RNA sequence: GGGAACGACUCGAGUAGAGUCGAAAAAAUGUUCUGUUCGCAGAACAUUAAGCUGGUGUCCCGACCAGGCUGGAUGUCAGUACACGAAGUGCCAGAUGGGGAAUGCCUCCGGCUUCGGCCGGAGGAAAUGGGAAUGAAAAUUCGUUUUCAUUCCCAUAAAAGAAACAACAACAACAAC
Reactivity to DMS in 0.01 (KOAc 150mM, MgCl2 10mM, bicine 150mM(pH8.5), 24C), signal-to-noise 6, nucleotides 027 to 126: a020a010u000g010u000u000c000u000g010u000u010c220g010c000a010g000a020a010c000a000u000u000a050a140g020c020u000g000g010u000g000u000c010c000c010g000a100c030c020a030g010g020c030u000g000g010a090u010g010u010c040a060g010u010a070c110a100c070g000a090a070g020u010g010c030c030a050g010a100u000g000g000g000g000a180a080u010g010c000c000u000c000c000g000g000c000u000u010c170g020g010c000c000g010g000a020g000g000a000a010
Reactivity to 2A3 in 0.01 (KOAc 150mM, MgCl2 10mM, bicine 150mM(pH8.5), 24C), signal-to-noise 3, nucleotides 027 to 126: a000a000u010g000u010u000c010u010g020u030u040c240g000c070a000g000a000a000c000a010u020u020a050a020g070c030u020g030g000u030g050u040c000c000c010g010a020c010c000a010g040g040c030u030g000g050a100u140g050u160c030a020g050u120a050c060a010c100g090a140a030g030u040g110c010c000a020g020a120u100g010g000g010g040a060a030u100g040c000c000u000c000c000g000g000c020u030u100c230g080g000c010c000g010g000a000g010g010a000a000